RNA sequence: GGGAACGACUCGAGUAGAGUCGAAAAAGUUAGAUGACAUUGUAGAACCGGUUACCUAAAUGAGCGAUAGAGUGCUUCGGUAGUAAAAAUAUCUUUCAGGAAGUAAACACAUCAGGAGCGAUAGCGGAUAUUACUGUCCCUUCGGGGACAGUAAUAUAAAAGAAACAACAACAACAAC
Reactivity to DMS in 0.01 (KOAc 150mM, MgCl2 10mM, bicine 150mM(pH8.5), 24C), signal-to-noise 6, nucleotides 027 to 126: a060g010u010u010a040g010a060u020g000a060c070a080u010u030g000u010a080g000a090a110c060c040g010g020u000u010a050c050c030u000a030a090a080u020g000a100g010c060g000a080u010a060g010a080g010u020g010c020u000u010c060g010g010u000a050g010u020a010a050a090a100a110u000a060u010c020u000u010u010c070a070g000g000a050a080g010u010a040a050a060c130a070c060a060u010c050a050g010g000a060g000c060g010a050u010a050g020c060g000g000
Reactivity to 2A3 in 0.01 (KOAc 150mM, MgCl2 10mM, bicine 150mM(pH8.5), 24C), signal-to-noise 4, nucleotides 027 to 126: a000g150u100u080a060g000a110u070g030a060c060a100u030u100g070u090a030g030a130a040c020c000g020g010u070u040a090c000c020u050a100a130a080u090g000a030g080c020g050a050u060a050g180a020g120u080g060c020u010u060c030g050g000u010a000g020u050a030a020a080a040a050u090a070u080c040u010u140u060c010a030g040g050a060a000g010u040a080a130a000c000a000c010a100u100c080a030g020g050a040g000c040g050a030u060a010g080c080g020g020
Chemical mapping of a 177-nucleotide RNA with DMS and 2A3. Reactivities are given for positions 27 through 126. 2A3 adducts were read by reverse transcription with SuperScript II with manganese.